[RMDB]
RNA sequence: GGGAACGACUCGAGUAGAGUCGAAAAUUCAUGCAACUGUAAUUCACAUAAGGUUUGAAAAUUGAUAUCAUCAAGCUAUUAGUGAUUUGAGCAAAAACUGUAAAAUUGAUAUCAGGAGUAAUACAUAAACUUUCAUAGGCAAGAGGUGAACUUGGUGCCGUAGGAGUAUAUUCGUAUACUCCUACGGAAAAGAAACAACAACAACAAC
Reactivity to DMS in 0.01 (KOAc 150mM, MgCl2 10mM, bicine 150mM(pH8.5), 24C), signal-to-noise 2, nucleotides 027 to 156: u010u000c020a090u010g000c010a080a050c060u000g130u000a090a110u000u000c020a030c060a070u010a070a150g000g010u000u010u000g010a000a050a110a300u000u000g010a110u000a090u000c010a190u000c060a020a030g010c040u000a050u000u000a090g010u000g020a170u000u000u010g020a160g010c020a020a040a110a100a050c050u010g060u000a060a050a050a100u010u000g030a050u000a000u020c020a030g030g000a110g020u000a090a110u000a010c040a050u000a020a060a050c020u000u010u020c020a100u000a120g010g000c070a100a080g000a110g000g030u010g000a020a070c040u000u000g010g000u000g030
Reactivity to 2A3 in 0.01 (KOAc 150mM, MgCl2 10mM, bicine 150mM(pH8.5), 24C), signal-to-noise 5, nucleotides 027 to 156: u060u020c040a020u090g020c030a070a070c060u060g030u280a080a070u090u040c050a020c020a080u080a090a090g030g010u030u030u020g100a070a070a060a070u110u100g040a040u070a030u100c050a010u010c020a040a010g000c010u070a100u220u080a110g020u010g050a020u020u070u150g030a020g000c020a000a050a050a060a100c050u090g020u160a060a050a060a110u080u100g020a020u030a030u110c020a020g010g030a030g070u080a070a070u070a150c040a040u110a090a120a030c020u100u150u130c060a040u090a040g010g000c010a010a010g010a010g020g010u040g030a020a020c010u020u040g010g020u020g050
This 207-nucleotide RNA was probed chemically with DMS and 2A3. Conditions: 150 mM KOAc, 10 mM MgCl2 and 150 mM bicine (pH 8.5), 24 C. Source: RMDB library OK3TST, as collected in RNAgym. For DMS the reverse transcriptase was MarathonRT.